[RMDB]
RNA sequence: GGGAACGACUCGAGUAGAGUCGAAAAGAGAGAACUCGAACUCACACGUUCACACACGAUCGAGUUCUCGAUCUCGUGUUCACUCUCUCACACGUGUGUUCACGAGAUCUCUCGUGUGUGAUCGAGAGAGAGAACGAACGUGUUCGUGAGUACACACGGUGCGAAGUACCUUCGGGUACUUCGCACCAAAAGAAACAACAACAACAAC
Reactivity to 2A3 in 0.01 (KOAc 150mM, MgCl2 10mM, bicine 150mM(pH8.5), 24C), signal-to-noise 1, nucleotides 027 to 156: g160a000g000a010g030a050a050c020u020c050g010a050a030c000u010c060a040c000a000c150g000u080u070c010a000c000a000c010a000c000g050a080u140c070g000a010g080u030u000c040u000c050g000a000u000c000u000c000g000u010g080u020u020c000a000c000u000c020u030c040u040c060a040c010a010c270g030u000g020u000g010u030u010c000a000c000g020a000g000a000u020c010u020c000u000c000g010u000g000u000g000u000g020a010u010c160g020a120g000a000g010a000g020a040g020a080a080c150g060a040a000c140g030u050g020u100u050c010g000u080g050a030g060u030a020c000a000c000a030c080